[RMDB]
RNA sequence: GGGAACGACUCGAGUAGAGUCGAAAAGCGUGCGUGUUCGCACGCACGCAAAGCGGCCAGCUCCAGGCCGCCAAACAAUAUGGUGCACAAAUGUCAGCAAAAAAAGAAUGGUGUUCGCACCAUUCAAUCACACGCUAAAGUUCGCUUUAGCGUGUGAAAAAGAAACAACAACAACAAC
Reactivity to 2A3 in 0.01 (KOAc 150mM, MgCl2 10mM, bicine 150mM(pH8.5), 24C), signal-to-noise 1, nucleotides 027 to 126: g010c000g010u000g000c000g000u050g050u090u170c230g070c040a010c000g030c000a000c000g000c000a000a060a060g010c000g000g000c020c010a050g020c000u010c010c000a000g020g010c040c020g000c000c050a090a160a010c050a030a000u040a040u030g000g000u010g010c060a010c040a050a170a030u280g070u200c060a060g020c100a190a080a080a020a000a000a060g000a000a000u000g000g000u020g000u050u060c200g010c050a000c010c000a000u000u000c000a000a010
Reactivity to DMS in 0.01 (KOAc 150mM, MgCl2 10mM, bicine 150mM(pH8.5), 24C), signal-to-noise 1, nucleotides 027 to 126: g000c000g050u000g020c020g050u000g050u000u030c170g010c010a010c000g020c000a010c000g000c000a010a060a110g000c010g020g010c000c000a140g030c080u010c050c000a060g000g000c000c000g040c000c170a020a080a010c140a040a050u000a010u010g000g010u000g000c040a160c160a050a040a070u030g000u000c090a130g040c100a000a000a050a140a050a150a010g000a020a000u000g000g000u000g010u010u000c230g020c000a010c000c000a010u010u010c000a060a210
Conditions: 150 mM KOAc, 10 mM MgCl2 and 150 mM bicine (pH 8.5), 24 C. Structure probing data (2A3 and DMS) for a 177-nucleotide construct. The DMS profile rests on 737 reads. The data come from the RNA Mapping Database (RMDB), library M2PK50.